[RMDB]
RNA sequence: GGGAACGACUCGAGUAGAGUCGAAAAUACCAUGUGUGUUUUGGAUGUGAAAAACCAAACUGUGUUGCAUGUUCUAAGAGUGCACGUUUGACACGUAUACCUGUUCAAACCAUUGUUAAUGGUUCAACUAAGGUUGUGUAUGUAACGGCAAAUGGUGACUAUGUCUGGGUUUCGACCCAGACAUAGUAAAAGAAACAACAACAACAAC
Reactivity to 2A3 in 0.01 (KOAc 150mM, MgCl2 10mM, bicine 150mM(pH8.5), 24C), signal-to-noise 1, nucleotides 027 to 156: u150a010c010c000a050u080g160u030g020u010g000u050u110u100u130g090g010a130u020g010u110g180a090a060a000a060a070c050c000a020a050a010c000u080g000u030g000u040u000g040c110a080u040g030u000u010c050u110a210a140g090a010g080u100g000c120a090c120g030u060u000u000g030a010c060a000c000g050u110a010u150a150c000c020u020g060u000u050c040a030a090a110c000c000a010u010u060g160u290u170a090a020u000g000g000u020u000c040a000a000c050u180a080a000g000g040u060u060g030u050g000u000a040u240g100u000a030a000c010g000g060c020a010a030a060u100g000g020u050g020
Reactivity to DMS in 0.01 (KOAc 150mM, MgCl2 10mM, bicine 150mM(pH8.5), 24C), signal-to-noise 1, nucleotides 027 to 156: u000a220c050c010a190u030g010u000g040u000g010u020u010u000u000g030g010a120u020g040u010g010a090a120a080a130a100c020c020a040a040a100c050u000g020u000g000u000u000g020c010a050u020g010u000u000c040u000a080a100g010a140g040u000g030c030a050c010g020u000u000u000g000a030c030a020c000g000u000a130u000a020c030c010u020g000u000u000c110a060a010a010c000c010a020u000u000g050u010u010a050a080u020g020g020u010u000c030a050a100c030u000a070a060g010g000u000u000g030u010g000u000a060u010g010u000a020a000c050g000g000c040a020a060a070u000g020g020u000g000
The record gives the reactivity of an RNA of 207 nucleotides to 2A3 and DMS. The reactions ran in a buffer of 150 mM KOAc, 10 mM MgCl2 and 150 mM bicine (pH 8.5), at 24 C. DMS adducts were read by reverse transcription with MarathonRT.